Chemical mapping of a 177-nucleotide RNA with 2A3. For 2A3, 360 sequencing reads were counted. The data come from the RNA Mapping Database (RMDB), library RFM100. Reactivities are given for positions 27 through 126. For 2A3 the reverse transcriptase was SuperScript II with manganese. Conditions: 150 mM KOAc, 10 mM MgCl2 and 150 mM bicine (pH 8.5), 24 C.
RNA sequence: GGGAACGACUCGAGUAGAGUCGAAAACAAUUGUGGUAAGCGUAUUACCGGUGGAGUUCUUAUGUGUGAUUAAAUACUUGUAUUUUUUCAUAUGUUCCUCCUAUUUAAAACCUGCAUUAGUGCUCUUUCCGAUAUUUCGUUUCGACGAAAUAUCGGAAAAAGAAACAACAACAACAAC
Reactivity to 2A3 in 0.01 (KOAc 150mM, MgCl2 10mM, bicine 150mM(pH8.5), 24C), signal-to-noise 1, nucleotides 027 to 126: c050a020a140u120u120g160u140g020g000u040a020a020g000c040g080u230a080u050u000a000c000c000g000g030u100g020g000a080g000u100u110c110u020u040a060u000g020u000g000u000g000a000u000u180a000a000a000u030a050c080u040u100g070u070a060u000u020u120u000u000u000c000a000u010a040u030g010u000u000c000c000u000c000c000u050a170u060u190u110a120a100a050a050c000c000u040g000c110a100u010u120a110g040u110g060c020u010c040u050u010